This 177-nucleotide RNA was probed chemically with DMS and 2A3.
The 2A3 profile rests on 14,068 reads.
Reactivities are given for positions 27 through 126.
The data come from the RNA Mapping Database (RMDB), library OK2TRN.
[RMDB]
RNA sequence: GGGAACGACUCGAGUAGAGUCGAAAAGGCGCGCGCGGCGAUAUAUCGCUAUUAUAUAAUACGCCGCUAUGCGUAUAUAUAUCGCGCGUAUCGCGCGAUAAUAGCGAUAGCGCGCAUACGCGCGAUACUGAUAAUUGAAGUUCGCUUCAAUUAUCAGAAAAGAAACAACAACAACAAC
Reactivity to DMS in 0.01 (KOAc 150mM, MgCl2 10mM, bicine 150mM(pH8.5), 24C), signal-to-noise 7, nucleotides 027 to 126: g010g000c010g010c000g010c300g010c040g000g010c000g010a100u010a040u000a060u000c010g000c000u000a010u000u000a260u000a060u000a100a120u000a140c010g010c010c070g020c040u000a050u000g000c000g010u000a040u000a050u010a150u000a020u000c010g000c000g020c000g010u000a010u000c150g020c000g000c000g000a030u000a030a010u000a010g000c000g010a040u000a080g000c020g000c010g000c120a010u000a010c010g010c000g020c000g000a010u000a010
Reactivity to 2A3 in 0.01 (KOAc 150mM, MgCl2 10mM, bicine 150mM(pH8.5), 24C), signal-to-noise 4, nucleotides 027 to 126: g140g010c010g000c010g000c000g010c010g030g000c010g020a020u020a010u000a000u150c000g000c010u010a010u080u030a060u020a020u020a140a210u120a080c010g010c020c010g000c040u030a050u120g000c000g020u000a010u000a000u000a000u000a000u060c010g000c000g000c000g020u010a010u030c090g000c010g010c010g010a000u030a060a030u010a010g000c000g010a020u020a040g010c000g000c000g010c010a000u010a010c000g010c000g010c000g000a000u010a010